[RMDB]
RNA sequence: GGGAACGACUCGAGUAGAGUCGAAAAUCCUCACGUUUCGACGUGAGGAGAACUCUAGCAAGGGAAGGGAACCCUCGGGAAGGGCUCCCAACGCGAUCUCAACAAGGGCCAAAUUCGUUUGGCCCAAAACUGUGUUCGAGUUCGCUCGAACACAGUUAAAAGAAACAACAACAACAAC
Reactivity to DMS in 0.01 (KOAc 150mM, MgCl2 10mM, bicine 150mM(pH8.5), 24C), signal-to-noise 1, nucleotides 027 to 126: u000c000c010u000c020a000c020g000u000u000u010c260g020a000c000g000u000g020a010g010g020a050g000a030a110c010u000c010u010a020g010c030a100a300g000g000g010a130a190g000g000g040a030a030c000c000c000u000c030g040g010g040a230a090g010g000g030c030u000c000c010c030a020a010c150g020c080g030a100u000c030u000c030a110a090c210a090a030g000g000g010c000c010a000a060a030u000u000c230g000u000u000u000g030g010c000c020c000a030a010